Structure probing data (2A3) for a 207-nucleotide construct. The data come from the RNA Mapping Database (RMDB), library M2RFPK.

RNA sequence: GGGAACGACUCGAGUAGAGUCGAAAAGCAAGCUAGCCGGCAAAAAAGCAAACUUGACCACCAAGGAUAAAAGACAUCUUAUCCAAGGAUGCAAAAGAUAAUCUCACUUUUGACACCCACUGAUCUCAAAACGUGCGGUUCUUCGGAACCGCACGAAGGAGUAAAAGAACUUCGGUUCUUUUACUCCAAAAGAAACAACAACAACAAC
Reactivity to 2A3 in 0.01 (KOAc 150mM, MgCl2 10mM, bicine 150mM(pH8.5), 24C), signal-to-noise 2, nucleotides 027 to 156: g030c030a020a020g020c000u080a000g020c010c030g140g030c160a050a150a020a090a000a000g080c070a120a070a040c060u060u020g060a060c020c010a030c030c030a050a040g030g000a010u010a030a060a010a000g180a030c020a050u060c020u050u020a000u000c000c020a040a040g010g000a010u030g000c000a010a010a000a010g030a090u080a080a170u110c000u040c030a020c020u030u000u030u020g060a070c010a000c050c040c010a050c070u060g060a160u030c030u030c110a050a130a060a030c000g010u000g000c000g000g010u000u000c010u010u000c050g000g000a000a000c010c000g000c000a010c000g000a000a010
The reactions ran in a buffer of 150 mM KOAc, 10 mM MgCl2 and 150 mM bicine (pH 8.5), at 24 C.